[RMDB]
RNA sequence: GGGAACGACUCGAGUAGAGUCGAAAAUGGAAGCACCUUGAGUCUCUCCACCUCAUUCUUCUAAGAACCCAUGGCUGGCCAGGCAUAGCUUCUCAUGUCUGUAAUCCCAGCACUUUGGGAGGCCAAGACCGAUGACGUCAUUCGUGACGUCAUCGGUAAAAGAAACAACAACAACAAC
Reactivity to DMS in 0.01 (KOAc 150mM, MgCl2 10mM, bicine 150mM(pH8.5), 24C), signal-to-noise 1, nucleotides 027 to 126: u020g010g030a070a080g030c220a050c060c080u020u000g010a060g010u000c000u000c050u000c040c030a070c080c010u000c020a080u000u000c030u000u000c100u010a100a080g020a120a150c040c030c040a070u000g000g020c040u010g000g020c300c020a010g010g000c020a050u010a150g000c100u000u000c100u020c020a020u000g000u000c000u000g040u010a130a130u000c080c000c000a060g030c100a060c150u000u000u050g010g000g010a000g010g040c070c110a090a090g000